Structure probing data (2A3) for a 207-nucleotide construct. Source: RMDB library VIROID, as collected in RNAgym. The 2A3 profile rests on 630 reads.
RNA sequence: GGGAACGACUCGAGUAGAGUCGAAAAGGCGGGGUAGUGUGCUGCUCGGGCACAACUAGUUGAGAGCUGGGCCGCUCUCUUUAUGAGCCCAUGGUAGGGCGAAACCAGUUCGGUACGGCAUGGCGAGGCUUGCCUCGGAGCCAAGCGGGAGGGCUCCCCUCUAUACGCAGUUCGCUGCGUAUAGAGGAAAAGAAACAACAACAACAAC
Reactivity to 2A3 in 0.01 (KOAc 150mM, MgCl2 10mM, bicine 150mM(pH8.5), 24C), signal-to-noise 1, nucleotides 027 to 156: g010g000c090g010g000g000g000u040a060g040u020g040u040g060c010u020g020c020u010c020g000g000g040c020a020c010a120a030c060u040a060g060u050u140g120a090g010a000g060c040u040g000g140g020c010c000g020c000u050c000u000c010u030u100u020a230u090g030a010g060c090c050c060a040u110g140g100u150a050g000g000g000c000g010a070a010a010c000c000a050g070u210u220c080g000g060u080a050c060g020g050c050a080u100g040g040c080g010a020g020g060c090u110u100g040c080c000u000c010g000g010a010g010c020c070a070a020g020c050g000g010g010a070g000g000g000c020u080c000c000